[RMDB]
RNA sequence: GGGAACGACUCGAGUAGAGUCGAAAAAUAGGAAUCAUUUCCUUGGUUGUCAUACGUGUGGCAAUCUGACUUUGUUGACCAUCACGUAAAACUGUUUCCGUUAUACGGAUUUUCGUCAUAAUUGUUCUCCUCAUCAACCUGUCUUAUCUGAUGACGACCCACUAGUCGUGUUCGCACGACUAGUGGGAAAAGAAACAACAACAACAAC
Reactivity to 2A3 in 0.01 (KOAc 150mM, MgCl2 10mM, bicine 150mM(pH8.5), 24C), signal-to-noise 1, nucleotides 027 to 156: a020u090a000g060g030a060a140u210c100a190u090u000u120c000c000u050u100g030g030u030u000g030u020c040a010u030a130c090g040u060g000u000g060g000c060a030a000u070c090u040g110a220c080u250u110u120g060u000u050g080a160c040c020a050u230c100a000c030g020u040a010a070a140a090c030u030g030u040u080u000c000c000g030u010u030a050u000a300c000g030g030a010u060u000u120u140c030g000u080c140a030u040a150a070u080u130g060u270u000c080u060c070c000u030c020a060u020c000a020a100c040c070u040g130u120c090u210u170a180u220c050u100g040a020u070g000a000c010g150a090
Chemical mapping of a 207-nucleotide RNA with 2A3. The reactions ran in a buffer of 150 mM KOAc, 10 mM MgCl2 and 150 mM bicine (pH 8.5), at 24 C. 2A3 adducts were read by reverse transcription with SuperScript II with manganese.